The record gives the reactivity of an RNA of 177 nucleotides to DMS. It was measured as part of the RMDB library M2PK50. DMS adducts were read by reverse transcription with MarathonRT. The RNA was probed in 150 mM KOAc, 10 mM MgCl2 and 150 mM bicine (pH 8.5) at 24 C.
RNA sequence: GGGAACGACUCGAGUAGAGUCGAAAACCUGUUGACUUCGGUCAACAGGAAAAGGUGGAUGCUACGCUAGCGAAGUAGCAAAAGUGCAGAAGGAACGCACAAAAACUUAUCCGUUCGCGGAUAAGAAACAAGGGAGAGGGUUCGCCCUCUCCCUUGUAAAAGAAACAACAACAACAAC
Reactivity to DMS in 0.01 (KOAc 150mM, MgCl2 10mM, bicine 150mM(pH8.5), 24C), signal-to-noise 1, nucleotides 027 to 126: c000c000u000g000u000u000g020a030c010u000u010c300g040g020u000c000a000a000c000a030g000g000a030a040a060a150g080g000u000g030g000a130u000g020c030u000a000c030g010c070u030a090g010c160g030a030a140g010u000a010g030c020a000a050a010a040g000u000g020c030a140g040a170a170g030g000a050a050c300g010c030a000c020a060a060a070a120a080c000u000u030a010u010c000c000g010u000u000c220g060c010g000g000a000u000a000a030g000a100a130